Structure probing data (2A3 and DMS) for a 177-nucleotide construct. For 2A3, 4,971 sequencing reads were counted. The reactions ran in a buffer of 150 mM KOAc, 10 mM MgCl2 and 150 mM bicine (pH 8.5), at 24 C. It was measured as part of the RMDB library OK2TST.
RNA sequence: GGGAACGACUCGAGUAGAGUCGAAAAGGUGUGGUCAUACUCAACGUCGAUGACCCGGCGGUGGCGGCGAUGGCUGACGCGACCGUGGCCCGCGUGAUUCGGGUUAGUCGCGGUAGUUAUAGCCAUAGGUAAUUAGUCGAUUCGUCGACUAAUUACCAAAAGAAACAACAACAACAAC
Reactivity to 2A3 in 0.01 (KOAc 150mM, MgCl2 10mM, bicine 150mM(pH8.5), 24C), signal-to-noise 4, nucleotides 027 to 126: g090g030u110g040u130g080g030u050c010a020u040a120c030u060c150a140a090c090g080u070c030g110a110u090g060a070c010c010c000g020g000c060g010g040u050g040g040c050g010g000c040g040a020u040g020g000c010u010g020a010c010g000c010g010a000c020c040g100u130g040g010c000c020c000g030c030g040u100g060a160u140u100c030g000g000g000u020u090a030g020u030c000g000c010g010g010u010a030g000u030u050a050u080a060g000c000c000a040u060a040
Reactivity to DMS in 0.01 (KOAc 150mM, MgCl2 10mM, bicine 150mM(pH8.5), 24C), signal-to-noise 5, nucleotides 027 to 126: g010g010u000g040u000g020g010u000c040a070u010a100c100u000c110a100a130c220g020u010c070g010a070u010g000a080c060c030c040g000g010c060g010g020u000g010g000c080g010g010c060g010a050u000g000g000c000u000g010a040c040g000c000g010a010c020c230g040u010g010g010c000c000c000g000c160g010u000g020a150u010u000c000g010g000g010u000u000a170g000u000c000g010c010g000g010u010a020g000u000u000a060u000a110g000c010c010a070u010a060